[RMDB]
RNA sequence: GGGAACGACUCGAGUAGAGUCGAAAAAUACAGUACGAUAGUACAAAGAAGCAAUCAAACCGAGCAGUGAAAUGAUGGCUUCAGUCCAAAAUGGGCAAACACUGCAGACGGAGCCAAAGGCAAAUAACAUUGGAUAUUCCUUCGGGAAUAUCCAAUGAAAAGAAACAACAACAACAAC
Reactivity to DMS in 0.01 (KOAc 150mM, MgCl2 10mM, bicine 150mM(pH8.5), 24C), signal-to-noise 2, nucleotides 027 to 126: a080u010a110c160a240g000u000a000c020g010a140u010a050g030u000a000c000a120a140a080g050a040a020g000c030a050a020u000c060a080a070a100c050c080g000a090g010c010a010g010u000g000a130a120a070u010g000a040u000g000g010c010u000u010c010a020g000u000c020c050a090a060a070a070u030g010g010g000c060a030a070a070c000a000c020u000g000c020a030g000a200c080g020g030a080g000c010c080a010a040a140g030g000c090a020a020a040u000a030a110
Reactivity to 2A3 in 0.01 (KOAc 150mM, MgCl2 10mM, bicine 150mM(pH8.5), 24C), signal-to-noise 1, nucleotides 027 to 126: a050u120a020c030a040g000u030a000c010g040a220u170a090g030u010a010c010a010a200a020g060a050a000g040c000a000a060u070c000a030a060a080c020c010g040a010g000c010a000g040u050g080a030a120a140u090g040a000u050g040g000c000u030u040c050a010g000u000c020c000a020a200a030a280u110g000g000g000c000a010a020a020c010a030c030u010g000c000a000g050a030c050g000g000a010g020c010c000a090a050a060g040g030c040a120a040a120u140a040a020